[RMDB]
RNA sequence: GGGAACGACUCGAGUAGAGUCGAAAAUGACCCUGGACCCCUUCCUCCAGGACAGGGAUGGACCAGUGCUGUGGGCAUGGCUGCAGGAGCCAGAACUUGAGCCAGCUGUGUGGGUGUGGCUGGGGUGGCCAAGUCAUCUAUUCGUAGAUGACUUGGCAAAAGAAACAACAACAACAAC
Reactivity to DMS in 0.01 (KOAc 150mM, MgCl2 10mM, bicine 150mM(pH8.5), 24C), signal-to-noise 2, nucleotides 027 to 126: u010g020a170c010c010c010u000g010g000a150c030c010c000c020u000u000c010c010u020c110c080a130g000g010a100c150a040g000g000g010a120u000g000g020a170c020c010a050g000u000g010c060u000g010u010g000g000g000c050a070u000g020g020c040u000g030c060a090g000g010a090g010c010c040a060g020a110a150c060u020u010g010a130g010c080c030a110g000c040u000g020u000g010u000g000g020g000u020g020u000g010g000c030u000g010g000g010g030u010g000
Reactivity to 2A3 in 0.01 (KOAc 150mM, MgCl2 10mM, bicine 150mM(pH8.5), 24C), signal-to-noise 1, nucleotides 027 to 126: u080g020a010c020c010c010u000g030g030a090c010c040c000c020u020u050c010c000u000c030c040a050g040g040a010c050a010g120g020g030a010u080g090g030a140c020c010a000g070u000g000c040u020g050u050g020g000g010c010a090u110g050g000c050u060g000c090a020g260g000a010g000c010c000a080g030a080a050c070u090u110g010a010g040c000c030a000g010c070u060g000u040g020u050g090g090g020u120g030u030g030g060c010u070g010g000g040g030u010g000